This 177-nucleotide RNA was probed chemically with DMS and 2A3. High DMS reactivity at an A or C suggests that its Watson-Crick edge is free.

RNA sequence: GGGAACGACUCGAGUAGAGUCGAAAAAACUACUUCUUCGGAAGUAGUUAUUGCGUGGGUCUAAUAAGCCCAAGGUGCCAGGUUCGACCCUUGGUGGGCGCAUCACCGACCGAUUCGUCGGUCGGAAGUAAAUUGUUCUAUUCGUAGAACAAUUUACAAAAGAAACAACAACAACAAC
Reactivity to DMS in 0.01 (KOAc 150mM, MgCl2 10mM, bicine 150mM(pH8.5), 24C), signal-to-noise 5, nucleotides 027 to 126: a020a010c000u000a000c010u000u000c000u000u010c210g020g000a020a010g000u000a000g010u000u000a010u000u000g010c070g020u000g000g000g010u000c010u000a100a070u010a120a210g000c020c000c010a060a060g000g020u000g020c010c030a090g000g010u000u000c100g000a090c080c050c010u000u000g020g020u000g010g000g010c020g010c050a060u010c120a200c010c000g000a010c000c000g000a020u000u010c170g020u000c010g010g000u000c000g000g000a010a080
Reactivity to 2A3 in 0.01 (KOAc 150mM, MgCl2 10mM, bicine 150mM(pH8.5), 24C), signal-to-noise 4, nucleotides 027 to 126: a000a000c000u000a000c000u010u000c010u020u050c280g070g000a000a000g000u000a000g000u000u020a100u050u100g000c020g020u060g010g010g000u010c010u030a050a040u070a190a040g000c000c000c020a010a030g110g010u090g040c010c030a040g040g010u090u110c070g040a180c010c020c030u030u060g110g000u040g020g060g000c020g010c010a030u080c040a020c010c000g000a000c010c000g000a010u030u040c190g040u010c000g070g000u000c000g000g000a000a000

For 2A3, 7,365 sequencing reads were counted.
The DMS profile rests on 9,125 reads.